[RMDB]
RNA sequence: GGGAACGACUCGAGUAGAGUCGAAAACUUUCAUUCGUGAAAGAGUAGACCUUUGUGUUCCAGCUUAUUGUCAGUCUUAAGGAUCCCAUUGGGAUCCGGAGGACUUGGAUUUAUAAGCGGGAGGAACACUCUGGUGAACAUAAGCUUUCGAGCUUAACGAUUGUUGAGCAUUCGUGCUCAACAAUCGAAAAGAAACAACAACAACAAC
Reactivity to DMS in 0.01 (KOAc 150mM, MgCl2 10mM, bicine 150mM(pH8.5), 24C), signal-to-noise 1, nucleotides 027 to 156: c000u020u000u000c010a110u000u000c220g110u000g080a000a060a000g020a250g020u000a140g000a020c000c000u010u000u010g010u000g050u000u020c010c010a240g010c030u000u000a000u000u000g000u000c020a030g000u000c000u000u090a300a300g000g000a080u010c000c000c050a300u010u000g020g070g020a010u000c000c010g010g000a110g000g000a020c000u000u000g100g000a090u000u000u000a010u000a030a000g020c000g070g060g010a090g000g030a020a010c010a000c000u000c020u000g010g030u020g010a120a070c110a190u000a110a030g010c000u000u000u000c260g020a300g000c010u000u000a100a230
Reactivity to 2A3 in 0.01 (KOAc 150mM, MgCl2 10mM, bicine 150mM(pH8.5), 24C), signal-to-noise 2, nucleotides 027 to 156: c000u050u010u020c040a070u100u170c240g120u100g030a020a000a010g030a010g110u110a070g060a050c000c000u000u010u000g000u000g000u000u010c000c000a010g000c000u010u020a020u010u010g020u010c000a010g000u000c000u030u130a010a010g010g000a000u020c080c020c080a300u250u300g000g000g000a000u000c000c020g000g000a010g000g000a000c000u000u020g020g000a060u300u300u000a010u020a000a000g000c050g050g050g020a120g000g000a000a000c000a000c010u000c000u000g000g000u050g100a080a010c030a110u030a050a010g020c020u090u030u170c270g110a020g000c000u080u040a100a030
Chemical mapping of a 207-nucleotide RNA with DMS and 2A3. DMS (dimethyl sulfate) methylates the pairing face of unpaired adenines and cytosines. Conditions: 150 mM KOAc, 10 mM MgCl2 and 150 mM bicine (pH 8.5), 24 C. For 2A3, 1,214 sequencing reads were counted. Values are in units of 0.01, from 0 to 300, in steps of 10.